[RMDB]
RNA sequence: GGGAACGACUCGAGUAGAGUCGAAAACGUGUUAGUCGAAGUGGUCUGGAACGGCCUGUCGUAGAGGGUGAGAGUCCCGUAGACGAAAACAUGGUGACUGUCGUGACGGACACCCGAGUAGCAGCGGCCAAACCUAUUAGUUCGCUAAUAGGUUUGGAAAAGAAACAACAACAACAAC
Reactivity to 2A3 in 0.01 (KOAc 150mM, MgCl2 10mM, bicine 150mM(pH8.5), 24C), signal-to-noise 2, nucleotides 027 to 126: c020g010u020g020u040u050a140g120u020c020g010a100a010g020u080g120g190u010c010u020g010g000a020a020c000g010g020c010c080u050g000u000c010g000u020a050g030a090g110g010g000u000g010a060g010a000g120u040c020c000c000g030u060a050g000a010c030g020a050a000a000a030c060a050u150g100g010u120g050a040c020u020g000u050c010g020u030g020a000c020g020g010a010c000a010c000c000c000g010a010g020u030a010g000c050a010g100c030g070g040
Reactivity to DMS in 0.01 (KOAc 150mM, MgCl2 10mM, bicine 150mM(pH8.5), 24C), signal-to-noise 5, nucleotides 027 to 126: c020g020u000g010u010u000a070g010u000c010g010a090a140g030u010g000g010u000c030u000g010g020a190a040c040g000g000c020c060u010g010u000c020g010u010a100g000a240g010g000g010u010g000a180g000a220g000u000c010c010c020g000u000a160g010a070c110g000a080a050a050a060c100a070u020g000g010u000g010a060c050u000g000u000c020g000u000g000a150c050g000g000a070c030a040c020c040c010g000a050g000u000a030g010c050a040g020c060g010g000

Annotation:
Source: RMDB library RFMREP, as collected in RNAgym. Chemical mapping of a 177-nucleotide RNA with 2A3 and DMS. As a SHAPE reagent, 2A3 marks flexible, mostly unpaired nucleotides at the ribose 2'-OH. For DMS, 6,782 sequencing reads were counted. Conditions: 150 mM KOAc, 10 mM MgCl2 and 150 mM bicine (pH 8.5), 24 C.